[RMDB]
RNA sequence: GGGAACGACUCGAGUAGAGUCGAAAAAGCGCGUGUAUGCUGCCGAGCGAACUGCGAACGAAGCGCCGUUGCUGGCGAUGUCGAAGCGAACCAGCACCAUUCACGUUGACGUGGAAAAGGCCAUCGCCGCCCCUGUCAGAUUCGUCUGACAGGGGCGAAAAGAAACAACAACAACAAC
Reactivity to 2A3 in 0.01 (KOAc 150mM, MgCl2 10mM, bicine 150mM(pH8.5), 24C), signal-to-noise 1, nucleotides 027 to 126: a030g040c030g000c030g040u060g020u040a040u080g000c010u010g040c060c030g070a070g000c080g040a030a040c020u090g000c060g050a060a040c000g050a160a000g040c010g000c000c000g150u090u160g020c080u060g000g000c000g020a020u100g030u100c080g040a070a010g000c040g040a050a060c020c080a010g000c000a020c010c030a000u100u010c040a030c020g000u080u150g120a060c000g050u030g010g030a080a070a090a060g070g000c000c050a060u000c020g050c030
Reactivity to DMS in 0.01 (KOAc 150mM, MgCl2 10mM, bicine 150mM(pH8.5), 24C), signal-to-noise 1, nucleotides 027 to 126: a040g020c110g010c060g000u000g010u020a010u000g020c110u010g000c090c050g000a100g110c030g000a090a040c080u000g020c030g010a050a100c090g020a160a100g010c000g040c040c000g000u000u030g020c110u010g000g010c000g020a020u010g000u010c090g000a150a170g000c050g010a080a120c040c050a080g010c000a040c110c080a130u010u000c010a000c020g000u010u000g040a050c060g050u020g000g010a020a000a070a070g020g000c080c100a080u000c020g020c080
Chemical mapping of a 177-nucleotide RNA with 2A3 and DMS. The RNA was probed in 150 mM KOAc, 10 mM MgCl2 and 150 mM bicine (pH 8.5) at 24 C. The data come from the RNA Mapping Database (RMDB), library OK2TST. For 2A3, 961 sequencing reads were counted.